Annotation: An RNA of 177 nucleotides, treated with DMS and 2A3 and read out base by base. For 2A3, 20,034 sequencing reads were counted. Reactivities are rounded to 0.1 and cut off at 0 and 3. The reactions ran in a buffer of 150 mM KOAc, 10 mM MgCl2 and 150 mM bicine (pH 8.5), at 24 C.
RNA sequence: GGGAACGACUCGAGUAGAGUCGAAAAAUUUCGAACCUUCUCUGCAGGCAUCCCAAGCUUCUGCGCAAGCUCAAAUUGUGCAGCGGCGUCAUGUGGCACAAACUCGUGCAGCGGCGGGUCGAGAAGCUCGACCCUAUAUAUUCGUAUAUAGGGUCGAAAAAGAAACAACAACAACAAC
Reactivity to DMS in 0.01 (KOAc 150mM, MgCl2 10mM, bicine 150mM(pH8.5), 24C), signal-to-noise 9, nucleotides 027 to 126: a110u010u010u000c020g000a050a060c020c010u000u000c010u000c010u000g010c040a050g010g010c120a120u000c020c010c010a140a160g000c010u000u000c010u000g000c010g020c010a010a010g020c150u010c300a070a080a130u000u000g010u000g010c000a020g000c060g000g000c010g010u000c140a080u000g010u000g010g010c140a050c110a060a080a090c120u000c070g010u000g010c010a040g010c100g010g010c140g000g000g010u000c030g000a050g010a070a110g010c210
Reactivity to 2A3 in 0.01 (KOAc 150mM, MgCl2 10mM, bicine 150mM(pH8.5), 24C), signal-to-noise 8, nucleotides 027 to 126: a000u100u090u020c020g010a060a050c000c000u020u010c010u010c020u030g010c030a040g070g000c030a080u100c010c010c000a010a020g000c000u020u000c000u010g000c010g000c010a010a020g010c030u070c250a140a200a300u030u000g000u010g000c000a010g010c010g010g000c010g050u090c030a090u140g050u210g100g010c070a030c030a110a140a090c090u060c100g130u030g000c010a010g010c020g020g000c000g010g000g020u010c030g000a030g020a080a010g030c030